[RMDB]
RNA sequence: GGGAACGACUCGAGUAGAGUCGAAAACACAGGAGCUGCACUUGACAGCUUAUCUACCUCUAACAUCUUUACUAUGUACUUGAAGAUGUACAUGUCCACUUUGUGGUCAGGUGUCUUAAGCCUCAGGCAUUCCAGUUCUGAGGGAAAGCCAUAGAUGCUCAUGCUAUAACUUCGGUUAUAGCAUGAGAAAAGAAACAACAACAACAAC
Reactivity to DMS in 0.01 (KOAc 150mM, MgCl2 10mM, bicine 150mM(pH8.5), 24C), signal-to-noise 2, nucleotides 027 to 156: c020a140c050a170g020g010a040g030c000u000g010c060a160c110u000u010g020a080c030a040g010c010u020u010a080u000c050u000a110c030c000u000c020u000a110a040c000a090u000c030u000u000u000a160c030u000a070u010g040u000a050c020u000u010g030a060a040g020a030u020g050u020a060c040a080u000g000u010c010c000a020c020u010u010u020g050u000g050g000u000c000a030g000g020u010g020u000c020u000u000a070a110g010c000c020u000c010a010g020g010c050a260u010u030c170c130a100g020u000u010c000u000g010a040g020g010g000a030a030a040g010c100c030a060u000a080g010a110u010g010
Reactivity to 2A3 in 0.01 (KOAc 150mM, MgCl2 10mM, bicine 150mM(pH8.5), 24C), signal-to-noise 4, nucleotides 027 to 156: c150a010c020a030g010g050a020g000c000u020g030c050a100c190u160u160g170a100c020a010g010c000u000u010a060u000c020u030a080c040c050u140c060u080a110a070c030a070u040c040u070u110u070a090c040u050a030u090g030u040a100c010u030u050g090a020a000g010a050u020g000u020a010c010a040u030g010u010c010c000a020c080u090u130u300g030u010g000g010u010c030a020g040g000u010g010u020c010u030u050a080a080g040c000c000u000c000a000g020g000c000a060u220u110c100c010a030g010u180u070c000u010g010a010g000g000g010a030a070a000g010c030c010a020u040a050g090a040u120g010